Chemical mapping of a 177-nucleotide RNA with 2A3 and DMS. The reactions ran in a buffer of 150 mM KOAc, 10 mM MgCl2 and 150 mM bicine (pH 8.5), at 24 C.
RNA sequence: GGGAACGACUCGAGUAGAGUCGAAAAAAGUGGUGAAUAUCGAUCUCUGAAUAUAUUGAUAACCUUCACAAAUUUGCUGAUUAUUUUUGUAGCGCUCUUUCAUGAGAAAUGAUUGUCCCACAUGCAUAGGUUUAGAACAGUUCGCUGUUCUAAACCUAAAAGAAACAACAACAACAAC
Reactivity to 2A3 in 0.01 (KOAc 150mM, MgCl2 10mM, bicine 150mM(pH8.5), 24C), signal-to-noise 3, nucleotides 027 to 126: a020a000g090u080g040g050u240g060a050a010u030a000u040c020g050a030u000c030u010c020u020g050a100a010u120a080u040a040u160u110g060a040u040a080a110c010c010u040u030c060a010c040a040a060a030u110u110u090g070c080u050g090a160u110u130a070u050u090u000u060u010g040u030a010g020c010g000c070u020c020u050u070u010c020a070u180g030a000g020a020a080a020u180g000a030u040u070g060u000c000c000c000a010c010a060u060g000c000a050u040
Reactivity to DMS in 0.01 (KOAc 150mM, MgCl2 10mM, bicine 150mM(pH8.5), 24C), signal-to-noise 2, nucleotides 027 to 126: a010a050g030u000g010g000u050g000a040a070u020a010u020c000g000a200u010c060u000c060u050g010a110a060u000a120u020a010u020u010g020a050u000a030a060c120c010u030u010c010a010c040a060a050a030u070u000u010g020c020u010g000a040u000u010a010u050u000u030u030u000g000u000a050g020c070g000c100u010c010u000u000u010c020a020u020g030a060g010a060a040a040u040g000a100u040u010g010u000c020c000c000a020c120a050u000g000c130a180u000